RNA sequence: GGGAACGACUCGAGUAGAGUCGAAAAUCGAGACCGGUAUCCGGAUGCUCACCGCCGUCUACGUGCCGAACAUGACGCCGAACCGGGUGCACCGGUCGAGCCCCAUGGGCCGGUCGGACUACAGCGCGCCGAUUCACGACCAGUUCGCCGCGCUCGACAUCGUACUACGGUUCGCCGUAGUACGAUGAAAAGAAACAACAACAACAAC
Reactivity to 2A3 in 0.01 (KOAc 150mM, MgCl2 10mM, bicine 150mM(pH8.5), 24C), signal-to-noise 1, nucleotides 027 to 156: u060c010g040a010g000a050c020c000g000g040u100a080u030c000c000g010g060a100u240g110c020u040c040a080c120c000g050c090c020g000u000c050u080a080c050g040u100g110c050c050g000a040a000c040a090u120g050a000c000g070c050c030g010a020a030c000c000g030g000g000u130g010c050a050c000c000g030g010u020c000g000a000g000c050c000c000c000a080u180g000g010g050c010c020g010g030u090c040g000g000a000c000u070a100c080a050g010c000g030c020g040c070c060g100a150u130u140c050a030c150g070a110c080c020a020g000u000u000c000g030c020c030g000c040g010c030u010c000g010a010
Chemical mapping of a 207-nucleotide RNA with 2A3. It was measured as part of the RMDB library OK3TST. For 2A3, 720 sequencing reads were counted. The reactions ran in a buffer of 150 mM KOAc, 10 mM MgCl2 and 150 mM bicine (pH 8.5), at 24 C.